This 207-nucleotide RNA was probed chemically with 2A3. The RNA was probed in 150 mM KOAc, 10 mM MgCl2 and 150 mM bicine (pH 8.5) at 24 C. For 2A3, 892 sequencing reads were counted.

[RMDB]
RNA sequence: GGGAACGACUCGAGUAGAGUCGAAAACGAUCUGUUCGCAGAUCGAGCUACGGAGACGUAGCAAAGCGAGCGAGGGCACGGGCGCUCGCACUACCGGAAGUACAACCAUAUCCACGUGUGCUAGGAUAUGGCCGUGCCCAAAGAAACAGCACACGAACACUACUCCGCAUUUCGAUGCGGAGUAGUGAAAAGAAACAACAACAACAAC
Reactivity to 2A3 in 0.01 (KOAc 150mM, MgCl2 10mM, bicine 150mM(pH8.5), 24C), signal-to-noise 1, nucleotides 027 to 156: c010g000a000u020c020u030g060u060u090c160g060c210a000g000a020u040c020g000a020g000c020u000a020c000g000g040a090g060a110c040g010u020a000g040c020a000a070a070g000c000g000a000g010c020g010a000g030g000g010c000a000c000g070g000g000c000g050c000u010c010g040c010a010c020u120a050c000c040g010g150a090a010g070u140a050c010a100a030c050c020a010u000a000u060c010c050a090c190g000u010g000u000g020c000u000a010g000g000a000u000a000u020g000g050c000c000g000u000g000c010c000c000a060a160a020g140a020a060a040c060a020g050c010a000c000a000c050g000a060a000